Chemical mapping of a 207-nucleotide RNA with 2A3. The RNA was probed in 150 mM KOAc, 10 mM MgCl2 and 150 mM bicine (pH 8.5) at 24 C. 2A3 adducts were read by reverse transcription with SuperScript II with manganese. Reactivities are given for positions 27 through 156. For 2A3, 812 sequencing reads were counted.
RNA sequence: GGGAACGACUCGAGUAGAGUCGAAAACGAUUAAAUCCAUUGUCUUCUAUGGGUGUGGUUUGUGGCACCCCAAAACACUUACAAUAGUAACAUCAACAAUCACUGAUCACAGAUCACCAUAACAGAUAUAAUAAUAAUGAAAAAAUCUGCACUAUUACAUUACGAUGCCUUUCGAGGCAUCGUAAUGAAAAGAAACAACAACAACAAC
Reactivity to 2A3 in 0.01 (KOAc 150mM, MgCl2 10mM, bicine 150mM(pH8.5), 24C), signal-to-noise 2, nucleotides 027 to 156: c040g020a030u080u170a090a060a110u050c010c040a030u000u120g050u050c100u160u040c040u140a070u090g000g000g000u010g020u030g040g060u010u020u030g010u000g030g000c000a050c000c000c000c000a040a030a050a010c070a010c030u100u130a040c120a100a170u120a140g040u110a060a090c010a030u220c060a040a070c020a070a090u160c040a100c160u060g070a040u030c010a000c000a090g020a070u020c010a010c100c010a030u050a180a120c000a020g010a000u100a020u060a210a060u150a090a020u100a050a080u170g010a010a140a000a000a050a020u060c010u110g030c040a050c140u100a110u060u210a040
Notes:
The data come from the RNA Mapping Database (RMDB), library OK3TST.